[RMDB]
RNA sequence: GGGAACGACUCGAGUAGAGUCGAAAAGCUUAGCAGUUCGCUGCUAAGCGACGUUGACGGCCGUCACCGUUGACAAAUCCCAAUGAGGACAGGUGACUGACAGAUAUUAAGCGUUCGCGCUUAAUAAGUUGGCUAUAGUGUUCGCACUAUAGCCAACAAAAGAAACAACAACAACAAC
Reactivity to 2A3 in 0.01 (KOAc 150mM, MgCl2 10mM, bicine 150mM(pH8.5), 24C), signal-to-noise 2, nucleotides 027 to 126: g000c000u010u000a000g010c010a010g000u060u140c240g100c100u000g030c000u000a000a000g010c010g000a010c030g000u040u010g040a010c010g000g000c050c040g090u080c020a000c030c010g020u000u000g010a000c010a010a070a030u030c020c010c000a010a170u240g050a090g110g010a020c060a100g010g160u060g060a080c020u030g040a010c030a040g150a060u070a020u110u000a010a020g000c000g020u030u110c250g000c010g000c060u000u000a010a010u030a010a030
Reactivity to DMS in 0.01 (KOAc 150mM, MgCl2 10mM, bicine 150mM(pH8.5), 24C), signal-to-noise 2, nucleotides 027 to 126: g000c000u020u010a000g020c010a000g010u000u000c250g050c000u010g020c020u000a000a000g020c000g000a030c200g010u000u000g000a020c030g010g000c040c100g010u000c090a220c000c000g010u010u000g010a040c050a110a120a140u010c020c000c010a120a070u020g010a130g000g010a090c060a040g000g000u000g000a100c010u000g010a050c110a080g000a160u000a030u000u000a010a000g010c000g030u010u010c250g000c000g010c010u000u010a000a000u000a000a070
The data come from the RNA Mapping Database (RMDB), library M2PK50. Chemical mapping of a 177-nucleotide RNA with 2A3 and DMS. The reactions ran in a buffer of 150 mM KOAc, 10 mM MgCl2 and 150 mM bicine (pH 8.5), at 24 C.